[RMDB]
RNA sequence: GGGAACGACUCGAGUAGAGUCGAAAAGACCCGCCCAGCAGUGGGUGCAGCCUGGUACCAGACAGCCCCACCCUGACCUAGAGCAAAUGCUCGGGGCGCUCCCCUGGGCUUGAAACUUGCAGUAACACAGAACCCGUAGUUUCGACUACGGGUUCUGAAAAGAAACAACAACAACAAC
Reactivity to DMS in 0.01 (KOAc 150mM, MgCl2 10mM, bicine 150mM(pH8.5), 24C), signal-to-noise 1, nucleotides 027 to 126: g000a170c030c030c020g000c050c010c000a050g000c160a180g000u040g000g020g080u000g050c030a080g000c000c000u060g000g020u000a030c150c050a060g000a050c040a070g070c020c000c020c020a000c000c090c120u010g000a080c170c020u010a170g000a080g040c000a220a050a210u030g000c050u000c000g000g000g040g000c040g000c240u030c000c000c070c000u000g000g010g000c080u020u040g010a120a160a030c250u000u060g030c030a030g000u020a000a130c060a130
Structure probing data (DMS) for a 177-nucleotide construct. Reactivities are given for positions 27 through 126.